[RMDB]
RNA sequence: GGGAACGACUCGAGUAGAGUCGAAAAGAUAUGGACUUGGACCGUCUGAACUACGCAUUACUCGGAAACGAGUAUUGCGCAGACGCUAGUCCUAAGUCAAAGGUGAUGUGGUUCGCCACAUCACCAAGAAACUAAUGUUGUUCGCAACAUUAGUUUCAAAAGAAACAACAACAACAAC
Reactivity to DMS in 0.01 (KOAc 150mM, MgCl2 10mM, bicine 150mM(pH8.5), 24C), signal-to-noise 9, nucleotides 027 to 126: g010a130u010a140u010g000g000a010c000u000u000g010g010a050c080c020g010u000c000u000g000a100a060c130u010a300c030g000c000a010u000u000a000c000u000c000g010g000a080a080a190c010g000a010g000u000a000u000u000g010c010g010c020a010g000a020c010g000c240u010a070g000u000c010c010u010a010a030g010u000c010a090a110a090g010g010u000g010a020u000g020u000g000g000u000u010c280g020c000c000a000c000a000u000c000a000c010c010a030a040
Reactivity to 2A3 in 0.01 (KOAc 150mM, MgCl2 10mM, bicine 150mM(pH8.5), 24C), signal-to-noise 9, nucleotides 027 to 126: g080a010u190a100u300g080g010a000c010u020u040g020g070a090c030c030g010u000c010u010g050a170a130c120u120a040c300g000c000a010u010u000a000c000u000c000g010g030a050a060a040c010g000a000g010u010a010u000u010g000c010g000c000a010g000a010c000g010c060u040a020g000u000c000c000u010a030a010g020u010c040a050a110a050g000g000u010g000a000u010g010u010g000g050u050u100c250g070c080c000a000c000a000u000c000a000c000c000a000a010